[RMDB]
RNA sequence: GGGAACGACUCGAGUAGAGUCGAAAACGGUAUUGGUCAAGGCUAUACCGACAGCGCACCUUCAAAAGGGCGCUUAAUCCCCGGCGAAGCGCCGAAAUAUGAAUAGACACCGCUGGGCUGGUAGGGCAAAACAUGGCGAUCUUCGGAUCGCCAUGAAGGUAUAAAGUACGUUCGCGUACUUUAUACCAAAAGAAACAACAACAACAAC
Reactivity to DMS in 0.01 (KOAc 150mM, MgCl2 10mM, bicine 150mM(pH8.5), 24C), signal-to-noise 1, nucleotides 027 to 156: c030g020g030u000a030u000u000g080g010u010c040a080a110g020g000c000u000a100u000a020c010c010g000a150c080a070g010c030g000c010a030c000c000u010u010c110a070a120a200a150g020g010g000c010g040c030u000u000a020a090u010c050c040c000c050g010g000c030g000a070a070g050c030g050c000c010g000a040a060a090u000a100u010g000a040a080u010a160g030a040c050a060c010c020g030c020u000g030g000g020c070u000g030g020u000a030g000g000g000c060a030a070a060a160c020a000u040g000g020c000g000a010u000c020u000u000c300g060g010a050u000c000g010c000c000a000u000g010a060a050
Reactivity to 2A3 in 0.01 (KOAc 150mM, MgCl2 10mM, bicine 150mM(pH8.5), 24C), signal-to-noise 2, nucleotides 027 to 156: c020g000g010u010a000u070u190g070g010u040c070a090a120g080g020c000u000a000u000a020c000c020g010a060c040a020g000c000g000c070a300c090c010u070u130c080a090a000a000a070g010g000g000c020g000c010u000u000a000a010u000c010c000c020c020g010g000c010g010a090a040g130c040g030c080c020g050a040a050a000u170a030u040g070a070a040u050a080g070a040c040a020c060c040g030c040u020g000g070g000c000u020g000g040u040a060g040g010g000c030a050a090a020a050c000a020u010g000g000c010g020a000u000c000u010u010c050g060g000a000u000c000g000c010c010a000u000g000a000a000
An RNA of 207 nucleotides, treated with DMS and 2A3 and read out base by base. Values cover nucleotides 27 to 156. The data come from the RNA Mapping Database (RMDB), library M2RFOK. The reactions ran in a buffer of 150 mM KOAc, 10 mM MgCl2 and 150 mM bicine (pH 8.5), at 24 C.